Source: RMDB library OK2TRN, as collected in RNAgym. This 177-nucleotide RNA was probed chemically with DMS and 2A3. 2A3 adducts were read by reverse transcription with SuperScript II with manganese. For 2A3, 1,462 sequencing reads were counted. The DMS profile rests on 1,514 reads.
RNA sequence: GGGAACGACUCGAGUAGAGUCGAAAACACGCGCCCGAGCAGCCAGGCCGAGACGUAGGCGGUCAUGGCGUCCUCGCGGCCCGCCCCCAGCACGCAGGCGACGGCGCCGAAGGUGGUCGCGUGGUGCGUGGGCGUUCUGGUUCGCCAGAACGCCCACAAAAGAAACAACAACAACAAC
Reactivity to DMS in 0.01 (KOAc 150mM, MgCl2 10mM, bicine 150mM(pH8.5), 24C), signal-to-noise 2, nucleotides 027 to 126: c040a080c060g030c300g010c020c000c000g020a100g040c300a300g000c010c010a040g000g000c000c000g000a050g000a120c200g030u000a080g010g010c000g010g030u010c010a100u010g000g020c000g000u000c300c050u000c020g020c080g030g010c040c050c020g050c060c000c040c000c010a190g030c060a050c050g000c060a110g000g000c040g010a030c060g000g000c030g020c020c030g000a090a120g020g030u000g010g010u000c000g010c000g050u010g010g030u000g020c050
Reactivity to 2A3 in 0.01 (KOAc 150mM, MgCl2 10mM, bicine 150mM(pH8.5), 24C), signal-to-noise 2, nucleotides 027 to 126: c040a000c030g040c010g000c010c000c000g010a060g030c130a050g010c000c010a010g010g000c010c030g080a040g090a100c230g120u220a100g000g210c240g030g020u060c080a300u060g010g010c000g000u050c020c000u030c020g050c070g000g000c020c020c010g050c000c000c000c000c000a030g060c020a030c030g110c030a010g020g020c000g040a080c030g070g130c070g050c020c000g050a100a080g080g020u060g080g030u050c030g040c010g020u000g020g040u000g010c030